[RMDB]
Structure probing data (2A3 and DMS) for a 307-nucleotide construct. The DMS profile rests on 10,268 reads. It was measured as part of the RMDB library POS240. For 2A3, 4,356 sequencing reads were counted.
RNA sequence: GGGAACGACUCGAGUAGAGUCGAAAACAUGGUGGAAAAUGGCCGCUUUUCUGGAUUCAUCGACUGUGGCCGGCUGGGUGUGGCGGACCGCUAUCAGGACAUAGCGUUGGCUACCCGUGAUAUUGCUGAAGAGCUUGGCGGCGAAUGGGCUGACCGCUUCCUCGUGCUUUACGGUAUCGCCGCUCCCGAUUCGCAGCGCAUCGCCUUCUAUCGCCUUCUUGACGAGUUCUUCUGAGCGGGACUCUGGGGUUCGAAAUGACCGACCAAGCUUGCUCUUCGGAGCAAGCAAAAGAAACAACAACAACAAC
Reactivity to 2A3 in 0.01 (KOAc 150mM, MgCl2 10mM, bicine 150mM(pH8.5), 24C), signal-to-noise 2, nucleotides 027 to 266: c020a020u060g010g010u040g020g020a050a040a070a160u070g030g000c000c020g010c040u110u060u110u080c040u080g080g070a110u120u130c040a050u120c130g090a070c020u010g000u020g020g000c000c010g000g000c010u020g000g000g010u000g000u010g000g000c000g000g020a000c010c000g000c030u050a040u110c050a030g030g010a020c020a090u140a000g000c000g060u020u040g050g000c000u020a040c000c000c000g000u000g000a080u070a040u090u230g040c020u050g070a110a020g020a000g100c000u000u000g070g000c010g000g000c030g010a060a100u110g040g030g010c040u020g010a010c000c080g010c000u060u040c010c010u080c040g030u050g020c010u060u050u110a050c010g000g000u050a140u170c020g000c000c000g000c000u010c000c000c010g030a060u060u110c020g000c020a000g020c030g000c010a020u040c000g000c000c000u070u030c010u080a100u070c030g010c010c010u050u130c010u110u080g050a030c050g000a000g050u020u010c000u050u030c040u050g030a030g040c010g010g010g050a040c000u010c050u100g040g020g000g000u060u050c010g020a070a030a120u100g040a060c040c000g030a060c030c010a030a010
Reactivity to DMS in 0.01 (KOAc 150mM, MgCl2 10mM, bicine 150mM(pH8.5), 24C), signal-to-noise 4, nucleotides 027 to 266: c050a070u000g000g020u000g000g000a060a060a100a110u010g000g000c030c020g000c060u010u010u010u010c040u010g010g000a120u010u010c090a070u020c090g010a080c060u010g020u000g000g020c020c030g010g020c140u020g010g000g010u000g010u000g000g030c000g000g010a030c050c010g020c140u000a030u000c090a110g000g020a100c300a120u000a030g010c020g000u000u010g010g000c020u000a080c160c010c000g020u000g000a110u010a060u020u010g020c060u010g000a090a090g000a070g010c040u000u010g010g010c100g000g010c060g010a080a100u000g010g000g000c020u000g000a080c120c030g000c040u000u000c070c090u000c070g010u010g000c120u000u000u010a130c030g000g000u000a050u010c030g020c010c000g000c030u000c020c010c000g010a100u010u000c070g010c050a080g020c050g000c070a050u010c070g020c010c000u000u010c080u000a090u010c040g010c050c020u010u010c090u000u000g010a100c070g010a130g000u000u000c000u000u000c060u000g010a100g010c060g020g000g000a060c070u000c060u000g010g000g010g000u010u000c040g000a050a080a070u010g000a050c050c010g000a100c110c060a070a140